[RMDB]
RNA sequence: GGGAACGACUCGAGUAGAGUCGAAAACGAUAUGCGGGGGACGAAGCCAAUGGAAGAUGCGUCAAAGGGAUUCCAGCCUGUGAUCUCAACUGAGAAACCCCGUCCUGCUUGGAUGAUGCAGGUAUGUGGACUUGCUGGAAAACAGGUCCUCAUACCCGUGGGAGAUGUUGUUCGCAACAUCUCCCACAAAAGAAACAACAACAACAAC
Reactivity to 2A3 in 0.01 (KOAc 150mM, MgCl2 10mM, bicine 150mM(pH8.5), 24C), signal-to-noise 1, nucleotides 027 to 156: c010g010a080u110a030u200g030c030g000g050g000g000g010a000c050g010a030a020g010c040c040a070a020u050g000g000a020a110g080a030u060g010c010g130u030c020a090a000a000g000g010g020a050u100u000c000c000a000g020c060c120u130g030u100g160a080u000c000u000c080a130a180c170u100g000a010g000a130a090a080c020c000c000c010g000u070c010c000u100g000c130u160u120g000g020a050u030g030a110u180g000c020a040g000g000u030a000u030g010u020g000g000a000c000u000u000g040c000u040g050g300a030a030a030a030c040a030g000g000u000c010c000u000c000a000u000a000c030c020c050